[RMDB]
The record gives the reactivity of an RNA of 177 nucleotides to 2A3. 2A3 adducts were read by reverse transcription with SuperScript II with manganese. The RNA was probed in 150 mM KOAc, 10 mM MgCl2 and 150 mM bicine (pH 8.5) at 24 C. The data come from the RNA Mapping Database (RMDB), library OK1LIB.

RNA sequence: GGGAACGACUCGAGUAGAGUCGAAAACAGACUCGAGCGAAAGCUCGGCGAAAGCCGCGUACAUGUGAGCGUCGGCGGGUGUACAGUCGACAGUUACUCUUCGGAGUAACAAUAGAAACAACAACAACCAGUAGCAUGGCUUCGGCCAUGCUACUGGAAAAGAAACAACAACAACAAC
Reactivity to 2A3 in 0.01 (KOAc 150mM, MgCl2 10mM, bicine 150mM(pH8.5), 24C), signal-to-noise 1, nucleotides 027 to 126: c000a020g080a000c000u070c100g000a000g000c020g030a250a000a000g100c000u050c060g000g040c030g050a080a130a000g140c000c000g010c060g040u020a070c040a080u150g010u070g160a110g010c100g000u070c000g000g020c000g040g000g010u050g060u110a100c090a030g000u050c040g000a000c060a010g000u000u000a020c000u040c020u020u040c290g110g000a000g000u000a000a000c000a000a000u170a040g130a000a070a000c060a050a000c020a020a000c000a000a120